RNA sequence: GGGAACGACUCGAGUAGAGUCGAAAAGAUAUGGAUUUAUAUGUCCCUAUUGGAACUGUCGAGAUGUAGUCGGAAACGACUAUACAUCGAUGAGACAGUUCCAAUAGGGACAUGUAAAUCCUAAGUCGUGUUAGAGGUAGUUCGCUACCUCUAACACAAAAGAAACAACAACAACAAC
Reactivity to DMS in 0.01 (KOAc 150mM, MgCl2 10mM, bicine 150mM(pH8.5), 24C), signal-to-noise 1, nucleotides 027 to 126: g010a040u000a300u010g000g000a010u000u000u000a000u020a000u010g000u000c000c000c000u000a010u000u000g010g000a010a000c000u000g000u000c010g000a190g020a010u000g000u000a010g000u000c000g030g000a130a090a250c010g030a040c000u000a100u000a130c070a030u000c000g030a140u020g010a300g000a010c010a010g020u010u000c000c000a000a000u000a010g000g000g010a000c000a010u000g000u000a000a020a000u000c000c000u000a010a040g020u010c100